[RMDB]
RNA sequence: GGGAACGACUCGAGUAGAGUCGAAAACGCCGUAGAUGGCUAUGGCAGUGGCUGCGUACGCAUUGCCCUUCGGGAUGUGCACCUUUACAGUUACACCCUUCCUUAUCGUUACGGUGAUCGUCACUGGGUCACCGGGAAAAUUCGUUUUCCCGGUGACAAAAGAAACAACAACAACAAC
Reactivity to DMS in 0.01 (KOAc 150mM, MgCl2 10mM, bicine 150mM(pH8.5), 24C), signal-to-noise 3, nucleotides 027 to 126: c130g010c020c000g040u000a090g000a150u010g000g020c070u010a030u000g010g000c040a120g020u010g000g030c020u000g010c090g020u000a060c080g010c050a050u000u000g020c030c000c060u000u000c160g020g000g000a070u000g000u000g000c050a060c080c150u000u010u010a180c100a080g010u000u000a090c050a130c040c020c020u000u000c030c020u000u000a080u000c090g000u010u000a080c050g000g000u000g000a110u010c090g000u000c050a040c080u020g000g020
Reactivity to 2A3 in 0.01 (KOAc 150mM, MgCl2 10mM, bicine 150mM(pH8.5), 24C), signal-to-noise 2, nucleotides 027 to 126: c040g000c010c020g000u030a060g020a260u250g110g000c060u050a040u090g040g000c020a020g050u010g050g000c030u040g020c050g100u030a040c060g020c030a040u020u120g180c000c000c000u060u080c110g040g020g020a030u050g030u020g000c030a060c010c030u110u080u000a070c030a040g000u030u040a060c040a050c010c010c000u000u020c020c010u090u090a100u150c070g100u090u050a050c030g000g040u040g030a050u140c070g080u040c040a040c020u050g020g060